An RNA of 177 nucleotides, treated with DMS and read out base by base.
RNA sequence: GGGAACGACUCGAGUAGAGUCGAAAAGAUAUGGAAUGUUAGGAGCCAACGCGAUCUUUUGACGAACCCUACAUCGGAAACGAUGUAGCGUUCGAUAAGAUCCGUUGGCUCCUAACAUUCCUAAGUCGAACAGAUAUACCUUCGGGUAUAUCUGUUCAAAAGAAACAACAACAACAAC
Reactivity to DMS in 0.01 (KOAc 150mM, MgCl2 10mM, bicine 150mM(pH8.5), 24C), signal-to-noise 3, nucleotides 027 to 126: g000a090u010a300u000g000g010a020a000u000g000u000u010a010g020g010a010g000c000c000a000a010c000g030c240g000a000u000c000u020u000u020u010g020a260c160g000a010a010c000c090c000u000a000c010a000u010c010g010g010a150a100a240c010g000a020u000g000u010a000g000c300g030u000u000c000g010a120u000a010a000g010a020u000c000c000g000u000u000g010g000c000u000c000c000u000a000a000c000a000u010u000c000c000u010a000a070g010u000c120
The data come from the RNA Mapping Database (RMDB), library TTRINS.